[RMDB]
RNA sequence: GGGAACGACUCGAGUAGAGUCGAAAAUGCUGCCGCACAACCAUGGCGACGGCAAAAUCAUUAGGCUAAUAACGCUUAUUUGCAUUCUUAUCAUGCCGGCAGCUCGCCCUUAAAUACUGUUUCCACUCAUACUCUACGAUUUCGAUCGUAGAGUAUGAAAAGAAACAACAACAACAAC
Reactivity to DMS in 0.01 (KOAc 150mM, MgCl2 10mM, bicine 150mM(pH8.5), 24C), signal-to-noise 3, nucleotides 027 to 126: u030g000c010u000g020c020c010g010c280a110c160a130a080c300c060a050u020g020g000c090g030a070c180g000g000c000a020a050a090a110u000c160a120u030u000a000g000g020c010u000a200a130u010a050a100c170g020c010u000u000a010u000u000u000g000c050a030u000u000c070u000u040a110u010c020a040u020g000c130c010g000g010c010a010g010c000u000c110g010c020c000c000u000u020a070a070a070u050a120c270u000g010u000u000u000c000c020a040c280u000
Reactivity to 2A3 in 0.01 (KOAc 150mM, MgCl2 10mM, bicine 150mM(pH8.5), 24C), signal-to-noise 9, nucleotides 027 to 126: u120g000c000u000g000c000c000g110c020a080c030a070a100c070c020a030u040g030g010c050g020a040c050g020g000c000a010a010a010a040u220c140a070u080u110a030g020g000c020u060a140a080u150a300a120c100g000c010u040u050a050u050u050u020g010c020a020u070u030c020u100u190a130u180c020a010u030g030c040c000g010g010c000a000g000c020u030c050g040c010c010c000u040u120a170a230a110u230a110c080u040g000u000u000u000c010c010a020c030u000